Description
Source: RMDB library 15KLIB, as collected in RNAgym. Chemical mapping of a 170-nucleotide RNA with 2A3 and DMS.
[RMDB]
RNA sequence: GGGAACGACUCGAGUAGAGUCGAAAAAAUCGUUGAGCGCAACGUCGUACGUGCUGCUCUUCUUGCCGGUUCAUUUGACAAAGUCUAUGAUAUUGGCAAUCCUAAAGGAAUUCCUAUUGUUGAUGACCCGGUACACGGUUCGCCGUGUACAAAAGAAACAACAACAACAAC
Reactivity to 2A3 in 0.01 (KOAc 150mM, MgCl2 10mM, bicine 150mM(pH8.5), 24C), signal-to-noise 6, nucleotides 027 to 129: a000a000u160c060g020u010u000g000a000g020c010g000c040a140a100c030g120u180c130g160u300a080c030g010u010g000c030u060g010c000u010c000u000u000c020u000u050g000c010c000g000g000u000u040c020a070u050u070u180g040a080c100a070a190a020g000u010c000u000a000u030g020a020u020a010u260u020g000g000c000a000a040u060c020c020u160a110a100a010g070g010a020a050u030u010c010c000u010a050u030u030g000u020u010g010a070u020g080a060c000c000c060g010
Reactivity to DMS in 0.01 (KOAc 150mM, MgCl2 10mM, bicine 150mM(pH8.5), 24C), signal-to-noise 6, nucleotides 027 to 129: a090a050u050c010g070u060u030g000a040g050c000g090c040a090a050c030g060u040c290g030u070a300c030g040u020g010c040u060g000c010u020c040u000u020c010u070u000g030c000c000g040g050u030u000c010a000u010u060u020g000a020c040a120a050a110g030u060c030u000a060u050g020a060u050a100u040u020g050g010c120a000a000u020c080c060u110a100a080a130g040g000a030a030u030u020c010c020u040a070u000u000g020u000u000g000a090u030g020a090c050c040c030g060

Annotation
The reactions ran in a buffer of 150 mM KOAc, 10 mM MgCl2 and 150 mM bicine (pH 8.5), at 24 C. Reactivities are given for positions 27 through 129. 2A3 adducts were read by reverse transcription with SuperScript II with manganese. For DMS the reverse transcriptase was MarathonRT.